[RMDB]
RNA sequence: GGGAACGACUCGAGUAGAGUCGAAAAAUUGUUGGCCUUCAUGACUAAAGAGUGCCCUGCAAGUUGACCAGAGGUCAAUCAGAACCUUUAGAUGUGGGAGCAAGGAGCCAAGAAGCCAAUACUAGUCACUCAGAACAGGCAGGUCAUUGCUAGCAUACGUAAUAGCACCUUUCGAGGUGCUAUUACGAAAAGAAACAACAACAACAAC
Reactivity to DMS in 0.01 (KOAc 150mM, MgCl2 10mM, bicine 150mM(pH8.5), 24C), signal-to-noise 1, nucleotides 027 to 156: a120u000u010g020u010u000g020g020c170c050u010u010c020a140u010g010a130c020u010a010a110a190g000a110g000u010g000c030c040c000u000g010c150a050a120g000u010u010g000a040c020c040a280g040a160g050g010u000c020a080a050u000c100a160g010a060a120c010c020u000u000u000a120g050a120u000g000u000g030g010g010a160g000c030a090a070g020g010a110g010c040c030a060a230g020a130a140g060c010c030a050a110u000a030c030u000a040g020u000c040a040c040u010c020a110g030a160a070c060a110g000g060c000a040g010g000u010c040a120u000u000g010c040u010a100g020c030a070u010a140
Reactivity to 2A3 in 0.01 (KOAc 150mM, MgCl2 10mM, bicine 150mM(pH8.5), 24C), signal-to-noise 2, nucleotides 027 to 156: a000u070u050g030u030u010g000g020c030c000u030u030c040a080u050g130a150c020u090a070a050a050g100a020g010u020g040c030c030c000u010g030c090a140a170g000u080u000g020a030c020c030a080g060a040g180g000u030c030a000a050u050c000a030g040a030a030c020c010u040u020u060a040g040a030u060g060u050g020g030g030a040g010c020a010a040g070g010a040g020c020c020a030a110g120a060a010g010c010c000a070a000u070a110c020u030a020g040u030c040a020c060u080c080a040g030a090a030c010a010g030g070c020a010g000g000u030c050a050u030u080g010c010u020a000g000c120a040u220a190